[RMDB]
RNA sequence: GGGAACGACUCGAGUAGAGUCGAAAAGAUAUGGAUUCCCAGUGGACAUGAAUAUACAUCGGAAACGAUGUGCAUUCAACAGCCACGGGAAUCCUAAGUCAAAGACCUAUACUUCGGUAUAGGUCAACACGUUACAUAACUUCGGUUAUGUAACGUGAAAAGAAACAACAACAACAAC
Reactivity to 2A3 in 0.01 (KOAc 150mM, MgCl2 10mM, bicine 150mM(pH8.5), 24C), signal-to-noise 4, nucleotides 027 to 126: g000a000u010a000u050g010g000a000u000u010c000c010c080a020g020u020g000g020a060c120a300u300g010a000a000u010a000u010a010c000a000u000c000g000g010a000a020a000c000g000a000u020g000u000g020c010a000u000u010c030a130a190c180a290g000c000c000a000c000g000g000g020a000a000u000c000c000u000a010a000g000u000c040a110a030a180g010a000c000c000u000a000u000a010c020u040u120c300g130g000u010a000u010a000g030g000u000c010a000a000
Reactivity to DMS in 0.01 (KOAc 150mM, MgCl2 10mM, bicine 150mM(pH8.5), 24C), signal-to-noise 4, nucleotides 027 to 126: g000a010u010a030u010g000g000a010u000u000c000c000c000a110g050u000g010g010a020c140a110u020g000a030a000u000a040u000a000c000a000u000c000g010g000a020a010a040c000g020a010u000g020u000g010c090a010u000u000c000a100a090c200a210g000c000c000a010c000g000g000g010a030a000u000c000c000u000a000a040g000u000c010a120a140a140g020a010c000c000u000a010u000a000c000u000u010c260g030g000u000a000u000a000g020g010u000c010a020a080